Chemical mapping of a 177-nucleotide RNA with 2A3 and DMS. For DMS the reverse transcriptase was MarathonRT. For 2A3, 3,163 sequencing reads were counted. 2A3 adducts were read by reverse transcription with SuperScript II with manganese. For DMS, 4,033 sequencing reads were counted.
RNA sequence: GGGAACGACUCGAGUAGAGUCGAAAAGUGCCACCAAGCCUCGUUAGGAGUAGGUCGCGUGCCGAGAGGAGAGCCUACCGCGAGAGGAUGUACAGGAUGCUAUUCCAGAACGCGGAGCGCGUCACGCUCCAGAGGUGAUUUUCGAAUCACCUCUGGAAAAAGAAACAACAACAACAAC
Reactivity to 2A3 in 0.01 (KOAc 150mM, MgCl2 10mM, bicine 150mM(pH8.5), 24C), signal-to-noise 3, nucleotides 027 to 126: g030u040g080c020c030a040c030c030a060a040g060c010c020u070c030g110u120u170a140g010g150a130g040u060a030g030g050u070c040g000c040g080u070g020c000c000g120a120g000a010g100g010a070g010a000g050c000c030u080a140c060c000g000c010g020a060g000a010g080g020a040u080g030u050a070c090a090g080g110a110u070g090c020u070a080u240u000c000c010a050g100a230a020c010g000c030g040g020a030g020c050g010c000g060u030c010a010c050g040c030
Reactivity to DMS in 0.01 (KOAc 150mM, MgCl2 10mM, bicine 150mM(pH8.5), 24C), signal-to-noise 4, nucleotides 027 to 126: g030u010g050c000c020a140c060c050a110a170g000c030c020u000c070g010u000u010a130g000g000a100g020u000a060g020g000u000c110g020c080g040u010g000c010c020g000a170g010a150g020g000a110g010a140g010c030c020u000a070c010c030g000c040g000a100g000a190g000g010a030u000g000u000a090c090a160g000g020a240u010g010c040u010a090u010u000c000c000a090g000a230a100c060g000c010g000g000a070g000c050g000c040g000u010c060a060c080g000c080